Structure probing data (DMS and 2A3) for a 177-nucleotide construct. It was measured as part of the RMDB library OK1LIB. 2A3 adducts were read by reverse transcription with SuperScript II with manganese. DMS adducts were read by reverse transcription with MarathonRT. Reactivities are rounded to 0.1 and cut off at 0 and 3. Values cover nucleotides 27 to 126. For DMS, 1,882 sequencing reads were counted.
RNA sequence: GGGAACGACUCGAGUAGAGUCGAAAAGCGACAUGGACGCAUGCUAUGCCCGGUAUCCGGGAUAGGACUGGCCCUGAUGUUGAUCGUUGUGCACCCACAUCACCAAAAACCCGGUGACCAGCAACCACUCUACCUGUACCUUCGGGUACAGGUAGAGAAAAGAAACAACAACAACAAC
Reactivity to DMS in 0.01 (KOAc 150mM, MgCl2 10mM, bicine 150mM(pH8.5), 24C), signal-to-noise 1, nucleotides 027 to 126: g000c060g000a120c060a000u060g000g020a100c060g000c070a040u020g000c000u000a020u030g010c020c010c040g000g020u000a070u060c020c010g000g010g000a040u010a030g000g010a080c070u030g000g000c000c000c050u030g000a050u000g010u010u000g000a020u030c110g010u000u010g030u000g030c000a070c000c040c000a080c040a070u000c030a000c030c000a050a060a070a070a140c030c050c040g040g000u020g000a130c090c010a170g000c020a080a100c120c060a300
Reactivity to 2A3 in 0.01 (KOAc 150mM, MgCl2 10mM, bicine 150mM(pH8.5), 24C), signal-to-noise 2, nucleotides 027 to 126: g050c020g050a060c020a120u120g090g000a010c030g050c090a020u120g000c020u010a020u220g230c000c000c000g000g030u250a170u080c090c020g000g030g030a010u010a040g050g040a130c050u060g040g000c020c000c020u050g130a030u080g000u000u050g080a180u100c020g000u030u120g030u050g060c010a070c020c030c000a000c000a030u060c000a010c000c020a030a010a000a070a130c040c000c010g030g010u020g000a030c010c020a040g110c010a020a010c020c000a050